[RMDB]
RNA sequence: GGGAACGACUCGAGUAGAGUCGAAAACAGUGUGAUCUCAGCUCACUGCAGCCUUGACCUCUUGGGCUCAAGUGGUCCUCCCACUUCGGCCUCCCGAGCAGCUGGGACUUACAGGCAUGUGUCAGCAGGCGUAAAAUGGGUUCGCCCAUUUUACGCCAAAAGAAACAACAACAACAAC
Reactivity to DMS in 0.01 (KOAc 150mM, MgCl2 10mM, bicine 150mM(pH8.5), 24C), signal-to-noise 1, nucleotides 027 to 126: c040a030g000u000g000u000g010a070u010c010u000c070a060g000c050u020c040a050c070u000g000c070a090g000c030c020u000u020g030a050c070c010u000c050u010u010g010g000g000c020u000c150a040a030g020u000g000g020u000c060c060u030c140c000c010a130c030u030u000c100g030g010c000c030u010c030c030c000g000a090g000c140a090g000c020u000g000g000g010a060c120u000u000a090c110a040g010g020c040a050u020g010u000g010u000c020a050g030c050a110
Reactivity to 2A3 in 0.01 (KOAc 150mM, MgCl2 10mM, bicine 150mM(pH8.5), 24C), signal-to-noise 1, nucleotides 027 to 126: c000a040g060u000g020u060g210a140u000c020u010c110a020g040c010u000c030a060c040u030g050c040a000g000c000c010u080u080g060a060c000c050u000c040u050u030g090g020g050c030u040c080a010a020g030u000g000g010u060c000c050u110c010c010c000a010c000u060u040c020g060g000c060c030u120c010c010c010g050a030g020c030a020g050c000u030g010g020g020a010c010u020u090a010c020a060g070g000c040a010u060g020u040g050u080c000a000g070c010a000

The record gives the reactivity of an RNA of 177 nucleotides to DMS and 2A3. The DMS profile rests on 1,527 reads. For 2A3 the reverse transcriptase was SuperScript II with manganese. Conditions: 150 mM KOAc, 10 mM MgCl2 and 150 mM bicine (pH 8.5), 24 C. Reactivities are given for positions 27 through 126.